[RMDB]
RNA sequence: GGGAACGACUCGAGUAGAGUCGAAAAGACAAGGUGGCUCAGAAGGUUUUCACAAGCAUGUACGAUGGAAUCUCCACGGCUGAAAUUGAUAACCUCACGUCCGAGGUGGCGAUCGGUAUGAUUACGGAGGAUCCCGACUAUGAGACGCUGGCGAUGCCCUCUGAGUCUGUUUCGACAGACUCAGAGGAAAAGAAACAACAACAACAAC
Reactivity to 2A3 in 0.01 (KOAc 150mM, MgCl2 10mM, bicine 150mM(pH8.5), 24C), signal-to-noise 1, nucleotides 027 to 156: g000a070c030a020a070g010g030u000g010g060c080u040c090a040g040a190a100g150g000u000u000u070u110c090a070c040a080a000g010c000a050u090g140u270a150c030g120a110u040g000g050a030a030u070c090u060c140c000a010c040g020g000c030u090g050a040a190a180u050u130g050a150u160a100a080c000c030u020c000a070c020g030u000c050c050g070a040g050g080u000g000g000c000g030a090u000c030g000g000u090a030u180g020a090u040u230a080c090g010g000a020g020g010a030u030c000c030c030g020a000c020u140a120u080g030a000g030a010c060g000c040u060g000g010c050g020a000u100g030c000

Record summary:
The record gives the reactivity of an RNA of 207 nucleotides to 2A3. For 2A3, 395 sequencing reads were counted. For 2A3 the reverse transcriptase was SuperScript II with manganese.